[RMDB]
RNA sequence: GGGAACGACUCGAGUAGAGUCGAAAAUGCUAAGGGUUUGAUAUCUGCUAAAACCCGGUGCAUUCAUCAAUGCUGGUUAAGCCAAAGGGAUGUCCCGACCGGAGGCCGACAAUCCAGGGAACCGGAUAAAAGAUUGGUGGGUUCGCCCACCAAUCAACUAGUUAAGUAUCUUCGGAUACUUAACUAGAAAAGAAACAACAACAACAAC
Reactivity to DMS in 0.01 (KOAc 150mM, MgCl2 10mM, bicine 150mM(pH8.5), 24C), signal-to-noise 4, nucleotides 027 to 156: u000g030c000u010a300a180g010g010g020u010u000u010g020a230u000a080u000c070u000g000c130u000a120a040a040a040c010c010c010g010g030u000g030c010a020u000u000c050a100u000c050a070a140u000g010c010u000g000g000u000u000a060a090g010c000c020a030a300a300g010g020g010a110u000g010u000c020c020c000g000a070c020c020g010g020a300g000g000c010c030g010a100c060a070a100u000c020c010a040g000g000g010a170a080c020c020g000g000a060u000a040a090a120a180g000a020u000u010g000g020u000g020g030g020u010u000c300g010c000c000c010a000c000c000a010a000u000c000a040a130
Reactivity to 2A3 in 0.01 (KOAc 150mM, MgCl2 10mM, bicine 150mM(pH8.5), 24C), signal-to-noise 5, nucleotides 027 to 156: u010g000c000u030a020a030g010g010g020u040u010u010g070a060u110a150u270c150u190g070c060u100a020a000a020a030c000c000c010g000g000u020g000c000a000u060u070c010a050u050c040a060a190u160g060c030u010g020g110u100u110a070a020g000c000c010a020a030a020g010g000g000a030u040g050u010c000c000c000g020a020c000c000g000g010a020g040g010c000c000g000a010c030a070a060u060c030c030a050g030g030g020a070a080c060c040g060g000a060u140a130a160a010a030g010a000u000u010g000g000u000g010g010g010u050u060c210g070c000c000c010a000c000c000a000a000u000c000a000a000